[RMDB]
RNA sequence: GGGAACGACUCGAGUAGAGUCGAAAAACGAAACCUACGCACUCGCAGCUUAAUAACCUGCGCUGAGCCCUUCUCCCCCAGCUUGCCUGUGUCCUAGGGAAUUGGAAGGUCAUCCUUCACAGGAUCGUCUAGGUAAUCCCUUUCGAGGGAUUACCAACCUUAAAAUAGCGUUCGCGCUAUUUUAAGGAAAAGAAACAACAACAACAAC
Reactivity to 2A3 in 0.01 (KOAc 150mM, MgCl2 10mM, bicine 150mM(pH8.5), 24C), signal-to-noise 2, nucleotides 027 to 156: a000c030g060a090a000a040c010c010u070a040c070g000c000a020c030u090c000g000c000a000g010c020u010u020a020a000u020a070a060c000c000u030g030c010g000c190u050g040a050g030c040c020c010u070u060c070u080c010c000c010c020c000a030g020c020u050u080g020c020c010u040g010u000g000u050c030c020u020a050g000g040g040a060a060u080u050g080g020a030a010g030g000u050c020a050u080c020c030u040u030c050a060c030a060g020g010a030u050c020g020u000c070u040a030g000g020u010a000a000u000c010c000c010u010u020u010c040g060a020g000g000g000a000u000u000a000c000c000a000a010
Reactivity to DMS in 0.01 (KOAc 150mM, MgCl2 10mM, bicine 150mM(pH8.5), 24C), signal-to-noise 2, nucleotides 027 to 156: a110c050g030a090a110a070c050c000u000a080c040g020c060a120c040u000c020g060c000a050g010c020u010u010a150a120u000a140a080c190c020u000g010c020g050c110u000g020a150g030c010c040c050u000u000c030u010c000c030c000c020c030a150g000c050u000u000g030c030c010u000g020u010g010u000c030c000u000a080g010g040g020a110a130u010u000g030g020a050a020g040g020u010c070a130u010c020c010u000u000c080a160c090a080g010g030a050u000c080g020u000c020u000a100g000g010u000a020a000u010c000c000c000u000u020u010c200g010a020g000g000g030a030u000u000a000c000c010a000a020
This 207-nucleotide RNA was probed chemically with 2A3 and DMS. The RNA was probed in 150 mM KOAc, 10 mM MgCl2 and 150 mM bicine (pH 8.5) at 24 C. For DMS, 3,401 sequencing reads were counted. For DMS the reverse transcriptase was MarathonRT. Values cover nucleotides 27 to 156. It was measured as part of the RMDB library M2RFPK.